[RMDB]
Structure probing data (DMS) for a 177-nucleotide construct.
RNA sequence: GGGAACGACUCGAGUAGAGUCGAAAAGAUAUGGAAGCACCUAGGCGAUAAGUCGUACUCGGAAACGAGUAUACGACUUUUGACGCCUACGUGCUUCCUAAGUCAAAGACACCCUUCGGGGUGUCAACUUAGAUUGUGGCUUCGGCCACAAUCUAAGAAAAGAAACAACAACAACAAC
Reactivity to DMS in 0.01 (KOAc 150mM, MgCl2 10mM, bicine 150mM(pH8.5), 24C), signal-to-noise 1, nucleotides 027 to 126: g000a000u010a300u000g000g000a000a000g020c000a000c000c100u000a000g010g030c050g020a240u000a020a060g020u000c010g000u000a050c010u000c010g020g000a150a110a100c000g000a030g010u010a070u000a030c020g020a000c000u000u000u000u000g000a210c050g010c020c010u000a000c300g000u000g000c000u000u000c000c000u010a060a110g000u000c040a100a090a250g010a020c000a000c010c000c000u000u020c150g090g000g030g000u000g000u000c020a030a090
The DMS profile rests on 1,078 reads.
Reactivities are given for positions 27 through 126.